[RMDB]
RNA sequence: GGGAACGACUCGAGUAGAGUCGAAAAGAUAUGGACUAGGCGUACUUUGAUCUGACGGGUUGCUACCCACCUGCCUCGGAAACGAGGCAGAGGCAACCCGUCAGGGAGUAUGGCCUAGUCCUAAGUCGCAACAAUAUGAGUUCGCUCAUAUUGUUGCAAAAGAAACAACAACAACAAC
Reactivity to DMS in 0.01 (KOAc 150mM, MgCl2 10mM, bicine 150mM(pH8.5), 24C), signal-to-noise 1, nucleotides 027 to 126: g040a140u030a300u020g010g000a010c000u000a000g010g010c010g000u010a000c010u010u000u030g020a080u000c000u000g000a000c000g010g030g000u000u010g030c000u010a080c060c030c250a300c090c010u000g000c000c010u000c000g010g010a150a100a170c010g030a000g000g010c010a020g000a050g030g000c010a000a010c060c000c010g030u000c000a000g000g050g000a000g010u000a000u000g010g010c000c000u020a000g010u000c000c010u010a010a070g000u020c220
Annotation
This 177-nucleotide RNA was probed chemically with DMS. For DMS the reverse transcriptase was MarathonRT. Conditions: 150 mM KOAc, 10 mM MgCl2 and 150 mM bicine (pH 8.5), 24 C.